[RMDB]
Chemical mapping of a 207-nucleotide RNA with 2A3. The 2A3 profile rests on 567 reads. Values cover nucleotides 27 to 156. For 2A3 the reverse transcriptase was SuperScript II with manganese.
RNA sequence: GGGAACGACUCGAGUAGAGUCGAAAACUCUCGCUUCCGCUCUCAGUAAUAAUCCUCCCCGGAUUGACGACAUGUUUGAGGAUGCGAUGGAGGAUGAGGUGAAUGAAGAAAAAGCUAGAUUACUCGCCAAAGUGGCAGCGUUCACACCGUCUGAGACGUCAGAAAAGCUGUUCGCAGCUUUUCUGACAAAAGAAACAACAACAACAAC
Reactivity to 2A3 in 0.01 (KOAc 150mM, MgCl2 10mM, bicine 150mM(pH8.5), 24C), signal-to-noise 2, nucleotides 027 to 156: c030u000c010u050c090g100c080u160u020c030c020g070c020u000c000u010c010a010g040u110a120a240u050a160a020u070c010c010u130c090c020c000c020g060g040a000u010u070g030a010c020g070a020c030a020u110g220u020u050u100g050a110g010g040a050u060g030c000g030a040u120g050g060a000g030g020a090u080g070a030g020g000u010g040a080a050u060g000a000a110g100a080a070a000a000a000g040c030u080a000g020a200u110u160a130c020u040c130g000c000c010a260a300a000g100u110g040g000c000a010g030c020g010u020u020c000a020c040a060c000c000g000u000c000u020g010a030g020a070c090